[RMDB]
RNA sequence: GGGAACGACUCGAGUAGAGUCGAAAAUGGACCAAUGAUGAGACAGUGUUUAUGAACAAAAGAUCAUGAUUAAUCCAGUUCUGCACAAAACACUGAGGUCCAUUAAACUUAUCGUUCGCGAUAAGAAGAAACAUAUUAGGUUCGCCUAAUAUGUUUCAAAAGAAACAACAACAACAAC
Reactivity to 2A3 in 0.01 (KOAc 150mM, MgCl2 10mM, bicine 150mM(pH8.5), 24C), signal-to-noise 9, nucleotides 027 to 126: u010g000g000a010c010c010a030a100u210g100a100u090g030a060g050a040c020a020g010u000g040u020u050u050a130u080g020a040a010c020a030a140a040a040g030a010u060c060a100u160g160a120u220u230a060a030u030c020c010a000g000u010u010c010u040g000c040a020c040a100a070a020a000c010a000c010u010g020a030g020g000u000c000c000a000u000u000a010a010a000c000u000u010a010u010c010g050u030u040c200g000c010g110a000u010a020a010g030a020a040
Reactivity to DMS in 0.01 (KOAc 150mM, MgCl2 10mM, bicine 150mM(pH8.5), 24C), signal-to-noise 8, nucleotides 027 to 126: u000g000g020a020c010c010a140a160u010g000a160u010g010a160g000a260c090a040g010u000g010u000u000u010a070u010g010a030a020c030a050a040a130a090g000a020u000c090a080u010g020a180u010u010a080a040u010c020c070a300g010u000u000c010u000g000c160a080c180a050a040a040a020c010a010c000u000g000a230g000g010u000c000c000a000u000u000a050a080a200c010u000u000a000u000c010g010u000u010c170g020c030g000a000u000a000a010g000a120a120

Source: RMDB library RFMREP, as collected in RNAgym. Chemical mapping of a 177-nucleotide RNA with 2A3 and DMS. For DMS, 11,814 sequencing reads were counted.